Record summary:
This 177-nucleotide RNA was probed chemically with 2A3 and DMS. The DMS profile rests on 2,160 reads. The RNA was probed in 150 mM KOAc, 10 mM MgCl2 and 150 mM bicine (pH 8.5) at 24 C. Source: RMDB library OK2TRN, as collected in RNAgym.
RNA sequence: GGGAACGACUCGAGUAGAGUCGAAAAAUUACAGGUGUGAGCCACUGCGCCUCGUCUACUUUUUAAUAUUUUUAGUGGAGACAGGGUUUCACCAUGUUGGCCAGGCUGGUCUUGAAUUCCUGACCUAUGAGUAUGACUCAUUCGUGAGUCAUACUCAAAAAGAAACAACAACAACAAC
Reactivity to 2A3 in 0.01 (KOAc 150mM, MgCl2 10mM, bicine 150mM(pH8.5), 24C), signal-to-noise 1, nucleotides 027 to 126: a000u190u140a090c030a000g000g000u060g020u010g130a030g080c010c010a090c040u050g050c040g000c010c000u040c060g010u080c050u030a080c030u270u000u040u080u130a170a220u190a250u110u220u030u080u090a050g000u000g000g020a020g030a020c050a050g050g000g000u000u090u090c040a030c000c020a020u160g050u060u110g000g040c020c020a000g130g030c140u070g020g000u020c000u090u060g080a090a070u120u000c000c000u050g050a100c010c000u040a110
Reactivity to DMS in 0.01 (KOAc 150mM, MgCl2 10mM, bicine 150mM(pH8.5), 24C), signal-to-noise 2, nucleotides 027 to 126: a100u010u010a100c050a030g020g030u010g010u010g000a090g010c020c010a070c030u000g010c130g020c040c030u010c100g010u010c020u000a030c030u010u000u000u010u020a070a140u020a140u010u000u010u000u000a060g020u000g000g000a060g000a040c030a030g000g000g000u000u010u000c060a080c050c020a080u000g010u000u000g010g000c020c010a040g010g000c160u010g020g000u000c030u010u000g010a080a180u010u000c000c000u000g000a120c040c020u000a150